[RMDB]
RNA sequence: GGGAACGACUCGAGUAGAGUCGAAAAACAGUAAACGCUUUCGCAGAAGUAGGACAACUUGCAGUACCCCUAGGCUCAUCUGUGUGUACCACAUUAAUCGCUCCGGCUUCAUACGUUUACGGUGAAAACACGGUAGAUUACUUAAAUGUAGCAUACAACCAUCCCUUCAGUUCGCUGAAGGGAUGGUAAAAGAAACAACAACAACAAC
Reactivity to 2A3 in 0.01 (KOAc 150mM, MgCl2 10mM, bicine 150mM(pH8.5), 24C), signal-to-noise 1, nucleotides 027 to 156: a000c000a010g030u090a060a060a000c000g000c060u020u190u050c150g000c120a030g030a140a000g050u230a080g020g070a020c000a180a030c100u030u170g010c000a020g060u140a100c060c000c000c020u080a060g020g000c000u060c040a160u040c060u020g010u000g070u060g000u070a060c040c040a040c010a120u030u180a170a030u060c030g070c150u020c000c030g030g000c060u060u000c040a000u110a190c000g010u060u040u030a090c100g000g030u080g130a110a140a000a020c120a000c060g000g000u060a000g050a190u030u030a030c030u070u180a000a000a110u170g020u000a000g010c000a060u040a110c060a020